[RMDB]
RNA sequence: GGGAACGACUCGAGUAGAGUCGAAAAUACACCCGCGGGAAGGCGUCCCACCGGGCCAGAUAAGUGUCGGCCACCAGCUCUUCCACGAAGGCAAAGGUGGCCGUUGGGCCAGAGACCGCGAGCACCACAUAUAGCAGGUAUUCGUACCUGCUAUAUGAAAAGAAACAACAACAACAAC
Reactivity to DMS in 0.01 (KOAc 150mM, MgCl2 10mM, bicine 150mM(pH8.5), 24C), signal-to-noise 9, nucleotides 027 to 126: u050a130c190a150c060c040c000g020c040g020g000g010a080a070g000g020c030g020u000c010c010c020a300c080c030g000g010g000c000c010a120g010a140u040a090a090g010u030g010u020c010g010g000c000c000a010c010c000a130g000c030u070c010u000u000c020c180a160c230g010a030a030g010g010c010a100a130a140g000g030u000g010g010c000c000g000u000u000g000g010g010c000c010a110g000a100g000a090c020c000g000c010g010a080g010c110a070c090c080a220
Reactivity to 2A3 in 0.01 (KOAc 150mM, MgCl2 10mM, bicine 150mM(pH8.5), 24C), signal-to-noise 9, nucleotides 027 to 126: u200a010c070a060c010c010c000g010c010g010g010g020a150a100g040g010c020g060u040c000c010c000a010c010c020g020g000g010c000c000a080g060a160u180a190a090g110u110g090u230c010g000g000c000c000a000c000c000a010g000c020u060c020u270u020c050c030a100c300g020a010a010g010g000c030a090a040a110g000g000u000g000g010c000c000g000u000u010g000g010g000c000c000a020g010a010g020a070c000c010g000c010g010a020g030c040a040c050c000a030
Conditions: 150 mM KOAc, 10 mM MgCl2 and 150 mM bicine (pH 8.5), 24 C. The record gives the reactivity of an RNA of 177 nucleotides to DMS and 2A3. For DMS the reverse transcriptase was MarathonRT. The data come from the RNA Mapping Database (RMDB), library OK1LIB.